Chemical mapping of a 177-nucleotide RNA with 2A3. For 2A3 the reverse transcriptase was SuperScript II with manganese. It was measured as part of the RMDB library RFM100. For 2A3, 850 sequencing reads were counted.

RNA sequence: GGGAACGACUCGAGUAGAGUCGAAAAGCGUAGUGUCCGUCUGCGUUUAGUGCCGUCUCCGGUCUGUGUCUUACAGGCUGUGGGACGGUUCUCACACCGCACUCACGGCCACAGAGCCACCGGAGAUCGCAGUAGUAGGCUUCGGCCUACUACUGCGAAAAGAAACAACAACAACAAC
Reactivity to 2A3 in 0.01 (KOAc 150mM, MgCl2 10mM, bicine 150mM(pH8.5), 24C), signal-to-noise 1, nucleotides 027 to 126: g030c040g080u070a000g000u090g000u000c050c050g050u000c010u000g000c000g000u000u000u100a070g010u070g000c010c020g000u000c000u030c000c000g000g020u000c010u050g000u000g070u020c010u120u300a080c050a040g000g010c000u000g050u160g000g000g000a000c000g000g000u020u010c000u000c010a020c000a020c000c000g000c080a080c040u090c000a040c010g000g020c010c000a030c020a000g080a000g000c000c000a010c000c000g020g050a030g000a040u020